This 177-nucleotide RNA was probed chemically with DMS and 2A3. The DMS profile rests on 731 reads. The data come from the RNA Mapping Database (RMDB), library OK2TST. The RNA was probed in 150 mM KOAc, 10 mM MgCl2 and 150 mM bicine (pH 8.5) at 24 C.
RNA sequence: GGGAACGACUCGAGUAGAGUCGAAAACUGCACGCAGACGGCAUUAUAACGGCUGGCCUGUACGUGCCCGGGGGGCGUGCGCCUCCAGCAUCGCCUAUAGGAUGACGAGGGUUACGCUAGUCGGUAACGGGAUUACCGAUUUCGAUCGGUAAUCCCGAAAAGAAACAACAACAACAAC
Reactivity to DMS in 0.01 (KOAc 150mM, MgCl2 10mM, bicine 150mM(pH8.5), 24C), signal-to-noise 1, nucleotides 027 to 126: c050u000g020c030a040c020g000c010a040g010a000c050g020g010c020a050u010u000a170u070a140a190c300g000g000c010u000g010g010c110c040u000g000u090a020c070g040u000g000c000c080c010g000g000g040g000g010g000c020g070u000g000c290g010c000c000u000c000c020a100g010c000a020u010c080g030c150c120u000a250u000a130g000g020a010u020g040a200c120g000a050g000g000g000u000u000a060c070g000c000u000a070g010u000c020g030g000u000a060a090
Reactivity to 2A3 in 0.01 (KOAc 150mM, MgCl2 10mM, bicine 150mM(pH8.5), 24C), signal-to-noise 1, nucleotides 027 to 126: c000u010g000c030a030c050g020c000a010g030a030c000g020g010c000a010u040u190a230u300a300a100c140g110g010c000u000g030g000c000c010u040g010u060a070c030g010u010g020c020c020c000g040g000g000g140g000g010c020g000u030g000c050g160c010c000u050c020c020a020g000c000a020u000c010g140c180c010u140a000u180a260g200g070a060u010g000a050c050g000a020g000g030g000u020u070a010c010g010c060u000a070g250u090c000g000g030u030a080a000